[RMDB]
RNA sequence: GGGAACGACUCGAGUAGAGUCGAAAACCGGAGGGAUCCAAGAGACGGAUGACUUUCCCCCAUUGGUUGGGAAAAGUCCCGGAACCAGGAAAUGGGAAAGAGACGGUAGAAAAGAGCGAGCCUCCCACUACUUCUCCGUUCGCGGAGAAGAAAAGAAACAACAACAACAAC
Reactivity to 2A3 in 0.01 (KOAc 150mM, MgCl2 10mM, bicine 150mM(pH8.5), 24C), signal-to-noise 5, nucleotides 027 to 129: c010c000g000g010a020g010g010g010a030u040c020c020a080a020g040a010g020a050c030g000g020a050u110g010a030c000u020u020u010c010c010c020c020c010a090u060u290g140g020u100u080g020g000g000a040a080a000a000g050u020c000c000c000g010g040a010a040c020c000a010g020g040a020a080a060u130g010g000g010a010a050a020g030a010g010a010c040g010g030u080a030g090a040a100a040a010g050a010g010c030g010a000g010c010c010u010c010c000c000a050c010u130a050
Reactivity to DMS in 0.01 (KOAc 150mM, MgCl2 10mM, bicine 150mM(pH8.5), 24C), signal-to-noise 8, nucleotides 027 to 129: c060c020g000g000a040g000g000g030a080u040c000c000a070a060g000a110g040a160c080g010g010a000u050g010a090c040u020u010u010c060c030c010c080c090a270u050u030g040g070u110u070g000g000g000a030a030a030a040g020u010c010c030c050g010g000a100a070c080c060a050g000g000a020a060a070u060g000g030g050a020a050a030g030a060g000a010c140g010g010u030a070g040a070a060a080a060g030a000g000c080g000a080g020c050c040u020c010c020c020a100c110u060a100